[RMDB]
RNA sequence: GGGAACGACUCGAGUAGAGUCGAAAACAUGAGUCUAGACGUACUCGUACAUCGUGUCUAGGAUCGUGAUCACUAUGCUAGUAGAGUACUAUACAUGGCACACUAUCGUACCGAUCACUAGGAUCGAAGUCGAUAGGUUGUUCGCAACCUAUCGACUAAAAGAAACAACAACAACAAC
Reactivity to 2A3 in 0.01 (KOAc 150mM, MgCl2 10mM, bicine 150mM(pH8.5), 24C), signal-to-noise 3, nucleotides 027 to 126: c030a050u110g020a020g050u000c000u010a010g010a030c010g060u050a030c040u020c070g010u090a060c030a140u190c080g020u020g040u040c010u030a000g030g020a070u020c040g030u040g020a050u120c030a000c110u050a010u090g010c010u020a010g040u030a070g080a040g130u020a100c010u020a000u010a060c130a130u070g020g040c030a030c010a000c050u070a050u140c030g030u020a030c040c030g020a020u100c000a030c220u090a020g000g130a030u080c040g070a050
Reactivity to DMS in 0.01 (KOAc 150mM, MgCl2 10mM, bicine 150mM(pH8.5), 24C), signal-to-noise 3, nucleotides 027 to 126: c040a040u020g010a040g020u000c000u000a070g000a030c020g030u000a070c080u010c120g030u000a100c160a120u010c120g030u000g020u000c010u000a030g010g010a030u010c010g020u000g010a080u000c080a110c060u000a020u010g010c030u000a090g020u000a120g030a110g000u000a010c030u000a070u000a050c090a060u020g010g000c020a070c050a060c100u020a050u000c040g010u000a050c110c030g000a070u010c040a090c100u000a160g000g000a050u010c050g010a160
Structure probing data (2A3 and DMS) for a 177-nucleotide construct. For 2A3 the reverse transcriptase was SuperScript II with manganese. Source: RMDB library OK2TRN, as collected in RNAgym. For 2A3, 2,610 sequencing reads were counted. For DMS the reverse transcriptase was MarathonRT.